RNA sequence: GGGAACGACUCGAGUAGAGUCGAAAACAAAACUGACCAGCUAUGAGGUCAUACAUCGUCAUAGUAAAACAAAACAAAACUGACCAGGUAUGAGGUCAUACAUCGUCAUAGCAAACAAAACAACAAACGAGGGUAGUAGUUUCGACUACUACCCUCGAAAAGAAACAACAACAACAAC
Reactivity to DMS in 0.01 (KOAc 150mM, MgCl2 10mM, bicine 150mM(pH8.5), 24C), signal-to-noise 1, nucleotides 027 to 126: c030a070a010a100a080c300u000g000a000c000c030a060g000c000u000a000u000g070a000g000g080u070c000a000u000a000c090a030u030c300g000u000c000a100u000a000g000u000a220a050a190a030c240a130a240a050a060c300a070a070a000a170c260u000g000a000c000c070a070g000g000u170a040u000g000a030g000g000u000c000a070u000a070c050a050u000c230g000u000c000a000u000a000g000c000a090a040a160c290a020a190a000a010c000a020a090c300a030a030a120
Reactivity to 2A3 in 0.01 (KOAc 150mM, MgCl2 10mM, bicine 150mM(pH8.5), 24C), signal-to-noise 3, nucleotides 027 to 126: c020a000a040a000a090c050u050g000a000c000c000a000g000c010u000a000u010g000a010g000g000u000c000a000u100a100c050a050u090c110g260u000c020a040u090a160g070u150a100a010a040a060c110a040a070a020a000c080a020a130a010a000c080u020g000a020c000c000a010g000g140u140a170u160g100a200g010g070u000c020a000u040a020c040a090u150c100g030u000c000a000u010a000g000c030a050a040a000c050a040a050a030a030c030a000a000c010a000a080a000

The record gives the reactivity of an RNA of 177 nucleotides to DMS and 2A3.
The DMS profile rests on 704 reads.
Reactivities are given for positions 27 through 126.
The reactions ran in a buffer of 150 mM KOAc, 10 mM MgCl2 and 150 mM bicine (pH 8.5), at 24 C.